[RMDB]
RNA sequence: GGGAACGACUCGAGUAGAGUCGAAAAAUCGGUUGACCCGGCAGCCCGGCGGCCGCUUCGGCGGUCAGCGGCUGGGCGGUCGGAAUGCCGUCGCCGGUCAGGCCGCCGCGGCGAAGCAAGUGAAUACCACUUUGCUAGUAUUCGUACUAGCAAAGUGAAAAGAAACAACAACAACAAC
Reactivity to DMS in 0.01 (KOAc 150mM, MgCl2 10mM, bicine 150mM(pH8.5), 24C), signal-to-noise 3, nucleotides 027 to 126: a070u030c060g010g000u010u010g000a140c150c000c010g010g000c040a110g010c010c010c000g000g000c000g010g000c000c000g000c080u010u020c100g030g000c020g010g010u010c040a040g030c060g020g010c000u010g000g020g000c020g000g040u000c010g000g000a080a040u030g010c020c010g010u000c030g010c040c010g000g000u010c120a120g000g010c040c020g000c040c000g030c060g000g010c010g010a170a120g000c100a060a110g020u020g010a160a100u020a140c120
Reactivity to 2A3 in 0.01 (KOAc 150mM, MgCl2 10mM, bicine 150mM(pH8.5), 24C), signal-to-noise 3, nucleotides 027 to 126: a000u050c020g010g020u060u090g150a190c030c000c000g010g000c010a020g010c030c000c000g020g010c020g010g000c000c000g000c010u070u030c130g070g000c010g000g010u020c060a030g100c030g160g010c010u150g000g030g000c020g010g020u030c000g010g030a050a030u170g040c000c000g000u020c000g000c020c010g050g040u140c070a090g100g080c030c010g030c020c020g030c040g010g000c020g040a030a000g000c020a070a040g050u110g130a120a060u140a170c030